[RMDB]
RNA sequence: GGGAACGACUCGAGUAGAGUCGAAAACAUUAGUUUGCAAUCAUCCAACACCAUCAAAAAAUUUUCUCAAUUACUUCGCUGUAUCUGUGAAAAUGAAAAAAUACUUGGAUUUCGUAUUCUGAUGGUCUCGCCUAUUACCCUUCGGGGUAAUAGGCGAAAAAGAAACAACAACAACAAC
Reactivity to 2A3 in 0.01 (KOAc 150mM, MgCl2 10mM, bicine 150mM(pH8.5), 24C), signal-to-noise 2, nucleotides 027 to 126: c030a060u070u060a020g030u000u000u010g010c060a040a060u150c050a080u030c050c020a060a000c010a030c110c110a060u040c180a000a000a100a160a120a050u020u000u000u000c000u020c010a030a130u040u030a010c000u020u130c110g190c280u070g010u100a010u000c000u070g020u000g030a010a010a010a010u020g200a090a000a000a000a000a000u160a110c000u020u000g030g040a040u110u100u090c020g000u010a000u000u020c010u000g010a040u000g030g000u000c050